[RMDB]
RNA sequence: GGGAACGACUCGAGUAGAGUCGAAAACGGGCGUAGAAGUGGAGACACUCUGAGCGCGCUGUUCGCUGCGCCUAGGUGUUAUCCCUAGGGUGUUAGGCAGUGGAACUGUGACAGCCGUAAGGGAUGACCCCGUAUGUAGCUUCGGCUGCGUACGGGGAAAAGAAACAACAACAACAAC
Reactivity to DMS in 0.01 (KOAc 150mM, MgCl2 10mM, bicine 150mM(pH8.5), 24C), signal-to-noise 9, nucleotides 027 to 126: c060g000g000g010c050g010u010a050g010a080a030g020u000g000g000a190g000a140c020a030c010u000c020u000g000a110g020c030g010c050g000c060u010g000u010u010c030g000c010u010g010c010g000c000c000u000a030g000g010u010g000u030u020a060u020c120c000c000u000a070g000g000g010u010g010u020u040a140g010g010c010a010g010u010g020g020a050a240c020u000g000u010g010a120c090a100g010c010c010g000u030a100a100g010g000g000a060u010g000a220
Reactivity to 2A3 in 0.01 (KOAc 150mM, MgCl2 10mM, bicine 150mM(pH8.5), 24C), signal-to-noise 9, nucleotides 027 to 126: c010g010g020g000c010g020u030a020g020a250a010g030u030g030g040a040g010a030c010a000c010u000c010u040g070a050g020c040g000c010g010c040u050g040u070u040c020g000c010u020g000c020g050c000c000u010a030g000g040u060g050u140u170a090u070c010c000c000u000a010g020g010g020u060g070u120u070a100g070g000c000a000g000u080g110g080a070a060c010u020g020u040g080a050c030a030g050c010c010g080u130a080a140g050g000g010a040u070g060a070